Source: RMDB library OK3TST, as collected in RNAgym.
This 207-nucleotide RNA was probed chemically with 2A3 and DMS.
The reactions ran in a buffer of 150 mM KOAc, 10 mM MgCl2 and 150 mM bicine (pH 8.5), at 24 C.
RNA sequence: GGGAACGACUCGAGUAGAGUCGAAAAAGCGGCGUCCAGCGCGGCGUAGAAGUCCGGGGCGCUCGCCUCGGCGCGCACCGCCGGUCCGCGCCCCCGGAGAGUGAUCUCGACCCGCUGGCAGUUCUUCGCCUGACGCGGAUUGCGCUCGUGGUGCAGCCAAAAUCGGAAUAUUCGUAUUCCGAUUUUGAAAAGAAACAACAACAACAAC
Reactivity to 2A3 in 0.01 (KOAc 150mM, MgCl2 10mM, bicine 150mM(pH8.5), 24C), signal-to-noise 1, nucleotides 027 to 156: a000g040c070g050g000c050g040u010c010c000a040g000c020g010c140g010g030c020g010u070a020g000a130a010g070u000c010c010g030g000g020g000c180g010c060u030c030g030c000c020u050c010g010g000c010g030c030g010c040a150c120c000g000c000c000g020g010u040c030c010g000c000g010c000c060c000c000c010g030g010a060g010a040g040u140g110a160u000c020u000c020g290a300c000c000c020g000c000u010g020g000c000a000g010u000u020c040u070u060c000g000c000c030u030g020a000c040g030c040g040g150a190u090u270g060c040g000c050u080c050g060u030g000g000u030g040c010a040g080c030
Reactivity to DMS in 0.01 (KOAc 150mM, MgCl2 10mM, bicine 150mM(pH8.5), 24C), signal-to-noise 1, nucleotides 027 to 156: a150g030c000g010g020c070g000u000c000c020a080g030c020g010c060g020g000c000g000u000a060g000a130a240g010u000c000c050g000g000g000g020c050g010c040u000c040g020c070c020u000c030g050g080c030g000c080g040c100a080c150c010g040c010c030g010g020u010c010c010g040c060g010c070c020c010c010c010g020g020a130g000a110g010u000g030a160u010c030u000c020g010a080c050c000c020g010c010u000g000g010c020a160g000u000u000c100u010u000c060g000c040c000u000g010a100c070g010c030g010g000a160u000u000g020c020g010c000u000c090g060u000g000g020u010g020c060a140g020c100